[RMDB]
RNA sequence: GGGAACGACUCGAGUAGAGUCGAAAAGAGUGUCGGUGUUGAUGCCGUAGAUGUCGGCGGCACUACGCCCGCUGACCUGGUCGGUGCGGAUGCAGGCUGUGCGGUGACCAGCCCUGACUUCGACCAACAUCGGUAUGCUAUUCGUAGCAUACCGAUGAAAAGAAACAACAACAACAAC
Reactivity to 2A3 in 0.01 (KOAc 150mM, MgCl2 10mM, bicine 150mM(pH8.5), 24C), signal-to-noise 5, nucleotides 027 to 126: g060a020g050u100g040u080c030g010g010u040g010u060u060g040a130u100g010c010c000g010u020a040g030a150u200g070u070c020g030g010c000g000g000c020a010c090u130a020c090g010c000c020c000g000c010u040g020a040c000c030u050g030g010u040c060g050g140u100g070c040g080g040a040u210g030c030a020g000g000c010u030g070u110g060c060g080g110u110g060a120c020c000a010g000c010c020c000u050g040a080c000u040u030c010g020a040c030c000a010a040
Reactivity to DMS in 0.01 (KOAc 150mM, MgCl2 10mM, bicine 150mM(pH8.5), 24C), signal-to-noise 6, nucleotides 027 to 126: g010a040g030u000g010u000c100g010g010u000g020u010u010g010a100u000g020c000c020g040u000a080g030a100u000g010u000c040g030g010c010g010g010c020a080c200u000a130c200g020c080c000c030g010c010u000g000a060c020c080u000g010g010u000c050g010g010u010g020c080g010g000a070u000g010c090a090g000g000c010u000g010u010g000c020g010g010u010g000a100c090c010a020g000c040c020c030u000g010a090c040u000u000c010g000a130c040c010a060a180
Conditions: 150 mM KOAc, 10 mM MgCl2 and 150 mM bicine (pH 8.5), 24 C.
Structure probing data (2A3 and DMS) for a 177-nucleotide construct.
It was measured as part of the RMDB library OK2TST.
DMS adducts were read by reverse transcription with MarathonRT.